[RMDB]
RNA sequence: GGGAACGACUCGAGUAGAGUCGAAAAUGCGUGAACGUAGCUUAACCGUCGGUGGGAAUUGACCGCGCCACCCAUAGCAGUCGAGAGGAACACCCGCAGCAAAGUGCGCCAACAACAGGAGGCUGACCACCCUACAAAAUUUCGAUUUUGUAGGGUGAAAAGAAACAACAACAACAAC
Reactivity to 2A3 in 0.01 (KOAc 150mM, MgCl2 10mM, bicine 150mM(pH8.5), 24C), signal-to-noise 3, nucleotides 027 to 126: u140g000c020g020u060g040a090a020c040g030u070a010g020c020u110u100a050a040c030c030g100u060c050g040g030u060g020g040g050a080a160u100u070g050a050c000c040g010c020g000c020c020a060c030c030c000a050u110a040g040c030a010g010u060c040g040a010g000a010g140g030a090a000c020a040c020c020c020g010c030a040g020c020a090a080a030g060u050g040c020g030c010c010a030a040c010a010a000c010a030g060g020a020g100g000c010u010g000a010c020
Reactivity to DMS in 0.01 (KOAc 150mM, MgCl2 10mM, bicine 150mM(pH8.5), 24C), signal-to-noise 6, nucleotides 027 to 126: u010g010c060g010u010g010a090a060c090g020u000a080g010c050u000u000a110a160c090c040g010u000c080g020g030u010g010g010g000a090a090u000u010g000a070c030c060g010c080g000c050c070a080c020c010c050a080u000a090g010c040a050g010u000c050g000a090g000a100g000g010a090a080c100a080c050c020c030g020c050a050g010c060a040a050a090g020u000g000c060g010c020c050a050a060c090a040a060c090a080g010g010a110g000g010c060u000g010a150c200

Chemical mapping of a 177-nucleotide RNA with 2A3 and DMS. 2A3 is a SHAPE reagent: it acylates the 2'-hydroxyl of flexible nucleotides of all four kinds. DMS adducts were read by reverse transcription with MarathonRT. The reactions ran in a buffer of 150 mM KOAc, 10 mM MgCl2 and 150 mM bicine (pH 8.5), at 24 C.